Record summary: The data come from the RNA Mapping Database (RMDB), library ARCHII. This 207-nucleotide RNA was probed chemically with 2A3 and DMS.
RNA sequence: GGGAACGACUCGAGUAGAGUCGAAAAGUUGCGAGUCGGGGGGAUCGUCCUCGUUAUCAACGUCAAAGCCAAUAAUAACUGGCAAAGAAAAACAAAACCUAGCUUUCGCUGCCUAAUAAGCAGUAGCAUAGCUGAUCCUCCGUGCAUCGCCCAUGUGGAUUAUUCUGAACUUCGGUUCAGAAUAAUCAAAAGAAACAACAACAACAAC
Reactivity to 2A3 in 0.01 (KOAc 150mM, MgCl2 10mM, bicine 150mM(pH8.5), 24C), signal-to-noise 4, nucleotides 027 to 156: g060u060u080g020c000g020a010g060u050c080g040g000g000g000g000g010a020u050c010g070u030c020c050u060c040g010u040u060a140u110c090a030a040c040g060u040c060a070a080a000g000c010c020a050a020u230a120a050u120a110a120c080u040g000g000c010a000a150a030g030a020a070a020a000a000c070a010a110a000a010c000c080u070a020g000c010u040u030u060c040g000c000u000g000c000c000u060a070a040u190a200a000g000c010a000g010u020a030g000c040a030u030a040g000c010u020g010a020u000c000c000u010c000c000g010u050g020c010a110u020c000g020c000c020c010a080u230g050u080g130
Reactivity to DMS in 0.01 (KOAc 150mM, MgCl2 10mM, bicine 150mM(pH8.5), 24C), signal-to-noise 2, nucleotides 027 to 156: g000u000u010g010c010g000a100g000u010c040g060g020g000g020g030g000a040u010c060g010u010c030c020u000c020g020u000u000a100u010c120a120a090c070g030u000c070a050a130a250g010c000c010a060a120u000a110a150u010a060a120c060u010g020g010c030a070a040a220g000a030a090a130a110a200c050a040a040a010a070c040c040u000a070g010c010u000u000u010c020g000c000u000g020c000c000u000a140a140u010a070a050g020c010a020g000u000a080g040c040a020u000a030g010c020u000g000a060u000c010c000u010c000c020g000u000g020c100a080u000c020g020c000c010c000a140u010g030u010g000
The reactions ran in a buffer of 150 mM KOAc, 10 mM MgCl2 and 150 mM bicine (pH 8.5), at 24 C.